RNA sequence: GGGAACGACUCGAGUAGAGUCGAAAAGGAACUAUGCUGGAAGACGAAGCCUCCACGUCAUCGUAAACACGAGCGGAGACGCGAUAGCAUAGUUAAGAUCUGGAGGAGGCACGGAUCAAAAUAAAAACGUGCUUGAAGUGUUCGCACUUCAAGUACGAAAAGAAACAACAACAACAAC
Reactivity to 2A3 in 0.01 (KOAc 150mM, MgCl2 10mM, bicine 150mM(pH8.5), 24C), signal-to-noise 9, nucleotides 027 to 126: g130g010a000a010c000u000a000u010g000c010u020g030g070a090a030g010a040c010g030a060a010g010c000c000u000c000c010a010c010g010u000c010a070u030c010g030u050a120a150a030c140a040c100g020a020g020c010g020g020a060g030a080c020g000c010g020a010u050a010g000c000a000u000a000g000u000u020a030a010g000a000u000c000u010g000g010a110g020g000a000g010g010c010a000c010g000g000a000u020c040a030a060a030a000u250a020a050a010a010a000
Reactivity to DMS in 0.01 (KOAc 150mM, MgCl2 10mM, bicine 150mM(pH8.5), 24C), signal-to-noise 7, nucleotides 027 to 126: g020g000a010a000c010u000a000u010g010c000u000g000g020a250a090g010a000c000g000a100a190g000c000c000u000c010c020a300c020g000u000c020a290u010c010g020u000a090a140a130c240a050c040g000a050g010c020g010g000a210g000a230c010g040c000g010a190u040a010g000c000a000u020a000g000u010u010a020a070g000a010u000c010u000g000g010a180g020g030a010g000g010c000a180c020g010g010a010u010c010a160a050a090a070u040a090a060a040a080a140